[RMDB]
RNA sequence: GGGAACGACUCGAGUAGAGUCGAAAAUAAGUCUAGUUCGCUAGACUUACUAUCGGGAAAACAGCCUCCCGGCUCGAUCAGGCGGAUUCCGUCCAAGCCCUGCAACACACGUAUUCGUACGUGUGAACACUAUGACUGACUUCGGUCAGUCAUAGUGAAAAGAAACAACAACAACAAC
Reactivity to DMS in 0.01 (KOAc 150mM, MgCl2 10mM, bicine 150mM(pH8.5), 24C), signal-to-noise 4, nucleotides 027 to 126: u000a010a010g000u000c000u000a000g020u000u010c230g030c000u010a000g010a010c000u000u000a010c060u000a120u010c050g000g020g000a060a050a090a110c150a100g010c040c060u010c020c010c010g020g020c040u000c030g010a090u010c120a110g020g010c040g010g000a170u010u000c050c040g000u010c040c050a090a120g000c030c010c020u010g020c120a080a170c010a000c000a000c000g010u000a010u010u010c200g010u000a010c000g020u000g010u000g000a080a180
Reactivity to 2A3 in 0.01 (KOAc 150mM, MgCl2 10mM, bicine 150mM(pH8.5), 24C), signal-to-noise 4, nucleotides 027 to 126: u060a010a000g010u000c000u000a010g000u040u060c180g010c090u000a000g000a000c000u000u000a010c010u030a030u120c030g030g010g020a020a080a030a120c040a050g070c000c020u020c000c020c000g040g010c020u040c040g050a090u090c040a040g020g010c020g070g030a160u240u060c050c060g010u010c020c020a040a000g030c020c000c010u040g040c050a130a070c010a010c000a000c020g000u000a010u050u110c220g040u040a010c000g020u000g000u000g020a020a010
Conditions: 150 mM KOAc, 10 mM MgCl2 and 150 mM bicine (pH 8.5), 24 C.
This 177-nucleotide RNA was probed chemically with DMS and 2A3.
Values cover nucleotides 27 to 126.
For DMS the reverse transcriptase was MarathonRT.